[RMDB]
Structure probing data (2A3) for a 207-nucleotide construct.
Source: RMDB library OK3TST, as collected in RNAgym.
Values cover nucleotides 27 to 156.
The RNA was probed in 150 mM KOAc, 10 mM MgCl2 and 150 mM bicine (pH 8.5) at 24 C.
RNA sequence: GGGAACGACUCGAGUAGAGUCGAAAAGCAUUAAGAGAGUACUCUUAUUCCCACAACGUUGGUGACAACGUUGAUUUUCCGGUGGCCACCCGCCCGGGCCACCGUUACUCCACUCCACUCCUUCGGGACUGGUUUGGAGGAACACCUUAGGGCUAAAGCGUAAUGAGUCAUUCGUGACUCAUUACGCAAAAGAAACAACAACAACAAC
Reactivity to 2A3 in 0.01 (KOAc 150mM, MgCl2 10mM, bicine 150mM(pH8.5), 24C), signal-to-noise 1, nucleotides 027 to 156: g050c010a060u160u000a020a020g000a010g050a130g210u170a120c010u010c000u000u000a000u000u030c000c010c010a020c000a010a000c000g000u010u010g010g070u070g060a010c000a030a000c000g000u000u000g050a090u150u010u120u080c070c000g010g000u000g010g000c010c000a020c020c080c070g000c050c000c000g000g000g000c000c010a010c000c010g000u000u070a010c000u000c000c000a000c000u000c000c010a000c010u050c000c010u030u030c180g060g000g000a000c020u010g000g000u000u000u000g000g000a000g000g000a020a020c060a160c020c070u060u160a020g000g000g010c000u010a070a060a000

High 2A3 reactivity points to a flexible backbone, as in loops and unpaired stretches.